This 177-nucleotide RNA was probed chemically with 2A3 and DMS. Conditions: 150 mM KOAc, 10 mM MgCl2 and 150 mM bicine (pH 8.5), 24 C. It was measured as part of the RMDB library OK1LIB. The 2A3 profile rests on 2,580 reads.

RNA sequence: GGGAACGACUCGAGUAGAGUCGAAAAUCAACGUCAACACCCUGAAAGCCUAUCCACUCAACCAGGGCGUGAUGGACAUCCCCGCACUUGAAAGUCGGAUGGCCAGCCUGAUUCAGGCAGACAUGGAAAUAGGCAGGGUAUUCGUACCCUGCCUAUUAAAAGAAACAACAACAACAAC
Reactivity to 2A3 in 0.01 (KOAc 150mM, MgCl2 10mM, bicine 150mM(pH8.5), 24C), signal-to-noise 3, nucleotides 027 to 126: u060c000a010a070c120g050u010c010a020a060c020a100c050c010c000u010g120a090a050a000g030c020c020u040a060u060c020c010a110c040u070c080a060a080c080c000a020g000g000g010c020g010u040g010a140u090g000g030a020c060a180u120c010c000c000c010g020c020a110c020u040u100g040a080a080a010g050u080c040g020g040a030u010g080g000c010c030a020g000c010c000u210g040a300u160u250c060a020g020g000c000a010g030a000c050a050u170g060g030a030
Reactivity to DMS in 0.01 (KOAc 150mM, MgCl2 10mM, bicine 150mM(pH8.5), 24C), signal-to-noise 4, nucleotides 027 to 126: u020c160a060a050c100g030u040c040a080a030c050a070c030c000c030u000g000a150a110a090g010c070c060u020a130u020c060c050a070c070u020c110a100a080c140c080a030g010g000g000c050g020u010g000a060u000g010g010a100c080a120u010c020c030c090c060g010c070a060c040u000u010g050a080a110a110g010u020c100g000g020a070u000g000g000c000c050a130g000c020c010u020g000a200u070u050c100a010g000g000c020a080g000a080c120a090u010g020g000a110